[RMDB]
RNA sequence: GGGAACGACUCGAGUAGAGUCGAAAAUUUCGAGACGCACAAUCUUGCACGGUUUUUUGUGCAACAUCACCGGCCCGAAUCUUGCACGGCAGCCGUGCAAGAUGUCAUGCACGGUUUCAGUGCAACAAAGGACAACCCACCUACGUACGUAGGUAAGACGACUCUGAAAGUUCGCUUUCAGAGUCGUAAAAGAAACAACAACAACAAC
Reactivity to 2A3 in 0.01 (KOAc 150mM, MgCl2 10mM, bicine 150mM(pH8.5), 24C), signal-to-noise 2, nucleotides 027 to 156: u110u080u080c040g020a040g030a030c070g050c020a030c020a070a070u030c020u020u010g020c000a020c070g020g050u060u020u000u040u090u260g000u020g000c010a000a000c010a030u060c010a010c050c040g110g010c030c010c060g010a010a040u050c000u010u010g030c020a020c010g040g000c040a040g090c040c010g000u010g000c000a000a010g000a000u000g020u000c010a030u060g000c010a020c090g020g000u010u040u110c090a020g000u010g000c000a010a010c090a070a100a030g070g020a020c010a030a060c020c000c020a010c010c010u020a000c010g250u090a040c070g000u010a070g020g000u020a000a030g080
Chemical mapping of a 207-nucleotide RNA with 2A3. Conditions: 150 mM KOAc, 10 mM MgCl2 and 150 mM bicine (pH 8.5), 24 C. Source: RMDB library OK3TST, as collected in RNAgym. 2A3 adducts were read by reverse transcription with SuperScript II with manganese. Reactivities are given for positions 27 through 156. For 2A3, 1,109 sequencing reads were counted.